[RMDB]
RNA sequence: GGGAACGACUCGAGUAGAGUCGAAAACUGGCGUCGUUCGCGACGCCAGAAAUACUUAGACCGAAGCUUAGAUGGCCGACACUUCCCUUGGGCGCAAAACAAAAACCGGUCUGUUCGCAGACCGGAACAAUAUGCUCUCCUUCGGGAGAGCAUAUUGAAAAGAAACAACAACAACAAC
Reactivity to 2A3 in 0.01 (KOAc 150mM, MgCl2 10mM, bicine 150mM(pH8.5), 24C), signal-to-noise 2, nucleotides 027 to 126: c000u000g000g010c000g000u000c010g030u010u070c180g010c040g090a010c010g000c000c000a010g010a000a000a000u050a010c020u140u130a030g060a060c000c040g110a080a000g000c050u150u140a050g020a120u160g200g000c000c000g010a020c020a020c250u010u010c050c000c000u070u130g060g000g010c070g000c070a000a020a020a090c040a030a090a020a010a030c000c000g010g020u000c000u000g000u020u130c300g000c100a000g000a010c000c000g000g010a000a000
Reactivity to DMS in 0.01 (KOAc 150mM, MgCl2 10mM, bicine 150mM(pH8.5), 24C), signal-to-noise 3, nucleotides 027 to 126: c000u010g000g020c000g030u000c010g020u010u000c200g020c020g010a020c010g020c010c000a000g000a010a030a070u010a070c090u000u000a110g000a110c040c010g020a070a060g010c060u000u000a080g000a120u030g010g010c000c000g000a130c050a060c160u000u020c010c020c010u000u000g000g000g020c000g030c170a080a060a050a060c180a050a090a070a070a110c000c000g010g000u000c000u000g000u010u010c180g000c010a010g020a010c000c000g010g000a020a030

The record gives the reactivity of an RNA of 177 nucleotides to 2A3 and DMS. The RNA was probed in 150 mM KOAc, 10 mM MgCl2 and 150 mM bicine (pH 8.5) at 24 C.